[RMDB]
This 207-nucleotide RNA was probed chemically with 2A3.
For 2A3 the reverse transcriptase was SuperScript II with manganese.
RNA sequence: GGGAACGACUCGAGUAGAGUCGAAAAGGGGUCGACGGAGAGAGAGGCUCAGACAUGCUCUGAAGCCUCCACGGAGCAACAGCUGAGCUACCCACCUCUCCCGUCGACGGAGGCACCCAAACGUCAUCCGAUAUGCUUCGGCAUAUCGGAUGACGAAGAAUUAACCUUCGUUCGCGAAGGUUAAUUCAAAAGAAACAACAACAACAAC
Reactivity to 2A3 in 0.01 (KOAc 150mM, MgCl2 10mM, bicine 150mM(pH8.5), 24C), signal-to-noise 2, nucleotides 027 to 156: g140g000g030g010u020c010g000a000c010g010g020a190g010a000g000a000g000a010g300g050c000u000c000a010g030a040c110a100u270g010c000u000c000u010g040a080a020g000c020c000u000c000c000a000c000g000g010a000g000c010a020a100c040a120g130c020u000g000a000g020c000u050a080c090c070c020a070c020c000u000c000u020c000c000c010g000u000c000g000a000c020g000g000a010g010g000c000a020c010c000c000a000a100a040c000g000u000c000a000u000c000c000g010a000u000a000u020g010c010u020u080c290g110g020c000a000u000a000u000c000g000g000a000u000g000a000c000g000a000a000